[RMDB]
RNA sequence: GGGAACGACUCGAGUAGAGUCGAAAAGAUCACCUGUUCGCAGGUGAUCAAUCUCCCACUUGAUCCAAGUCUCACAGCCUCGUUGCCCACGAGGCACGGGCGUAUUGAUCCGCUUCGGCGGAUCAAAGGAUAGCGUUAAAUUCGUUUAACGCUAUCCAAAAGAAACAACAACAACAAC
Reactivity to 2A3 in 0.01 (KOAc 150mM, MgCl2 10mM, bicine 150mM(pH8.5), 24C), signal-to-noise 9, nucleotides 027 to 126: g000a000u000c000a010c000c000u000g020u040u060c260g030c110a000g000g000u010g000a000u000c000a010a000u000c010u000c010c000c010a030c040u070u180g060a090u060c090c050a100a030g090u020c020u030c090a120c040a050g000c010c000u140c080g080u160u140g040c020c010c000a130c100g020a220g000g000c000a000c000g000g000g010c030g000u020a060u040u070g000a000u000c000c000g010c020u040u080c260g130g000c000g000g000a000u000c000a010a000a000
Reactivity to DMS in 0.01 (KOAc 150mM, MgCl2 10mM, bicine 150mM(pH8.5), 24C), signal-to-noise 7, nucleotides 027 to 126: g000a010u000c000a010c000c000u000g010u000u010c220g020c000a000g000g010u000g000a010u000c000a030a080u010c200u000c000c000c010a170c110u010u010g000a070u000c110c100a060a150g000u000c050u000c100a140c240a140g000c000c000u010c030g010u000u010g020c030c030c040a180c210g000a150g000g010c010a010c090g000g000g010c040g010u010a040u000u000g000a000u000c000c000g010c010u000u010c200g030g000c000g000g000a000u000c000a000a020a120
Source: RMDB library M2PK50, as collected in RNAgym. Structure probing data (2A3 and DMS) for a 177-nucleotide construct. For 2A3 the reverse transcriptase was SuperScript II with manganese. The reactions ran in a buffer of 150 mM KOAc, 10 mM MgCl2 and 150 mM bicine (pH 8.5), at 24 C. The DMS profile rests on 9,419 reads.